[RMDB]
RNA sequence: GGGAACGACUCGAGUAGAGUCGAAAAUCGGUAACUUAUGGUUCCAUCCUGAGGGACUCAUUGGCCUCUUCGCCCCGUUUUCGCCCGGGCAUGUUUGGGAGUCGGCUAAUCCAUUCUGUGGCGAGAGGGACCCUAUUAGAUUCGUCUAAUAGGGUCCAAAAGAAACAACAACAACAAC
Reactivity to DMS in 0.01 (KOAc 150mM, MgCl2 10mM, bicine 150mM(pH8.5), 24C), signal-to-noise 4, nucleotides 027 to 126: u000c120g020g000u000a030a060c030u000u020a060u020g020g010u010u010c070c050a100u010c020c040u010g010a080g000g010g010a040c020u020c130a050u000u000g010g030c010c020u000c050u000u010c140g000c070c010c020c040g010u010u000u000u010c020g010c020c010c030g010g000g010c110a060u000g000u010u000u000g010g000g010a110g010u000c030g000g020c120u010a080a110u000c020c010a100u000u010c080u010g020u010g010g020c010g000a050g010a070g030
Reactivity to 2A3 in 0.01 (KOAc 150mM, MgCl2 10mM, bicine 150mM(pH8.5), 24C), signal-to-noise 3, nucleotides 027 to 126: u120c020g010g050u130a040a100c030u090u140a120u300g030g000u100u000c020c000a030u100c070c040u030g050a090g030g000g020a040c010u010c160a110u070u140g050g010c000c010u060c040u090u080c070g030c010c040c000c000g040u040u020u020u020c020g000c000c010c000g040g010g000c070a040u140g140u110u230u080g020g000g000a050g030u090c040g040g000c060u050a070a050u070c030c000a050u150u000c030u080g130u140g030g010c020g000a020g010a030g050